[RMDB]
RNA sequence: GGGAACGACUCGAGUAGAGUCGAAAAACGAACACCGCGUGCGCGACGAUCGCGUGCCCGAUGUUCAGCUCGGCGAUGCCGGGCAGCGCGGCGAUCGCCUGCACGUUCGUGUAGUGCAAUCCGUGAAUCAGGCCGUAUGAUUCGUCAUACGGCCUGAAAAAGAAACAACAACAACAAC
Reactivity to DMS in 0.01 (KOAc 150mM, MgCl2 10mM, bicine 150mM(pH8.5), 24C), signal-to-noise 2, nucleotides 027 to 126: a040c080g010a100a050c000a000c010c070g060c190g030u000g000c010g000c070g000a120c080g010a020u000c000g000c000g030u000g020c020c030c050g010a110u000g010u000u000c040a090g050c000u000c000g000g010c010g010a190u030g040c000c010g000g000g030c020a030g000c050g020c000g030g010c050g030a030u010c010g000c010c040u000g000c010a010c000g010u000u030c220g020u000g030u010a140g010u000g030c080a150a120u000c010c010g040u000g010a150a130
Reactivity to 2A3 in 0.01 (KOAc 150mM, MgCl2 10mM, bicine 150mM(pH8.5), 24C), signal-to-noise 1, nucleotides 027 to 126: a010c020g100a030a000c000a000c020c020g000c020g050u010g010c000g000c050g000a130c100g090a230u100c000g000c000g010u000g000c030c050c020g090a100u100g080u030u030c030a040g000c010u050c000g060g030c130g280a170u300g000c020c000g020g000g000c040a030g090c080g040c000g140g000c040g060a160u000c000g030c030c010u030g000c000a000c000g010u120u090c070g000u000g020u040a040g030u040g060c040a080a100u090c050c040g090u130g090a020a090

Structure probing data (DMS and 2A3) for a 177-nucleotide construct. Reactivities are given for positions 27 through 126. In probing experiments dimethyl sulfate is read out at A N1 and C N3, which are open when not base-paired. It was measured as part of the RMDB library OK2TRN. 2A3 adducts were read by reverse transcription with SuperScript II with manganese.